[RMDB]
RNA sequence: GGGAACGACUCGAGUAGAGUCGAAAAGUUUGUUUUCGAACAAACAUAUAAGGGGUCACCCUAAGACAGGACAUGCUCUGUACUGAAGCCUCCACGGUAUUGAGCAACAGCUCGAGGGUGACGGAGGCACCCAGGAAGCGUGCAUUCGUGCACGCAAUCUCUAACUCGGUUUCGACCGAGUUAGAGAAAAAGAAACAACAACAACAAC
Reactivity to 2A3 in 0.01 (KOAc 150mM, MgCl2 10mM, bicine 150mM(pH8.5), 24C), signal-to-noise 1, nucleotides 027 to 156: g000u000u000u000g040u000u040u030u150c170g100a010a000c000a010a010a010c020a000u190a010u040a170a090g130g040g060g000u000c020a000c050c000c010u040a250a050g030a030c080a080g200g050a050c040a090u030g010c000u000c000u010g000u010a000c010u010g020a080a020g010c000c000u000c000c000a020c030g000g000u000a010u020u050g010a000g000c010a150a030c110a100g050c040u020c020g070a010g020g000g000u010g000a000c020g000g000a010g000g000c000a040c000c000c000a030g110g080a160a030g000c010g010u000g000c000a020u050u150c190g110u060g010c000a000c020g000c000a020a020
Chemical mapping of a 207-nucleotide RNA with 2A3.
Values are in units of 0.01, from 0 to 300, in steps of 10.